Conditions: 150 mM KOAc, 10 mM MgCl2 and 150 mM bicine (pH 8.5), 24 C. Chemical mapping of a 207-nucleotide RNA with DMS and 2A3. In probing experiments dimethyl sulfate is read out at A N1 and C N3, which are open when not base-paired. For DMS the reverse transcriptase was MarathonRT.
RNA sequence: GGGAACGACUCGAGUAGAGUCGAAAAGUAUAUCAGGGUAUAGUUUAGGCUAUCGCCAUUGUGGGCACCGCGGCUACCAUGGAUAAUUGUGUAAUACCGAUGGAGAUUUUUGCCUUCAUGGCGUCAAUCGAUAGCUUUAUUGCGCCUACACUACGCCUAAGAGUAAAGCAUUCGUGCUUUACUCUUAAAAAGAAACAACAACAACAAC
Reactivity to DMS in 0.01 (KOAc 150mM, MgCl2 10mM, bicine 150mM(pH8.5), 24C), signal-to-noise 4, nucleotides 027 to 156: g020u020a100u020a100u010c070a160g020g040g000u010a050u000a030g010u000u000u010a060g020g030c000u010a100u010c040g010c000c030a050u000u000g040u000g020g030g050c000a120c040c050g040c080g030g040c030u000a040c050c010a070u000g010g010a160u000a080a140u010u010g010u000g020u010a100a190u000a050c000c010g010a070u010g030g010a160g000a230u000u000u000u000u000g020c030c010u010u000c050a060u000g020g020c000g000u000c090a040a110u000c070g010a080u000a050g020c080u000u000u000a070u030u000g000c080g020c010c010u000a030c060a050c030u010a030c030g030c010c030
Reactivity to 2A3 in 0.01 (KOAc 150mM, MgCl2 10mM, bicine 150mM(pH8.5), 24C), signal-to-noise 6, nucleotides 027 to 156: g080u060a070u050a060u300c120a060g060g000g000u040a070u040a070g010u010u010u010a010g000g000c020u040a030u070c010g000c000c010a010u080u220g010u020g000g000g000c010a020c040c010g020c000g030g000c000u030a020c010c020a020u040g140g100a160u160a220a180u210u110g050u020g010u090a070a040u050a200c020c040g070a140u130g060g010a130g030a140u080u150u080u180u150g010c000c000u000u000c000a000u010g000g000c010g040u050c010a010a030u070c040g070a080u100a080g050c010u060u180u050a100u120u130g020c030g000c000c000u010a010c010a000c030u000a010c030g010c010c010